[RMDB]
RNA sequence: GGGAACGACUCGAGUAGAGUCGAAAAUUCAGUGCAGCAAAGGGGUUUCGGCUCCCAAGCGGUCUGACGCCCUGUCACGGUUUCCCUGCGGAGCUGUGCCCGGGGCCCCGACGGAUUCCGGUCCGUCGCCAACAGUCGCGUUCGCGCGACUGUUGGCAAAAGAAACAACAACAACAAC
Reactivity to 2A3 in 0.01 (KOAc 150mM, MgCl2 10mM, bicine 150mM(pH8.5), 24C), signal-to-noise 1, nucleotides 027 to 126: u060u010c000a000g010u020g300c000a010g020c000a030a050a040g000g000g030g000u000u030u080c250g190g000c030u040c000c020c000a070a000g020c000g020g000u000c000u010g000a020c080g030c030c000c030u020g010u010c000a000c000g020g000u040u180u040c010c000c100u170g080c190g030g000a000g000c000u000g000u000g000c000c060c000g010g000g030g010c000c000c000c010g000a000c000g000g000a010u070u000c000c130g210g020u000c020c000g000u010c010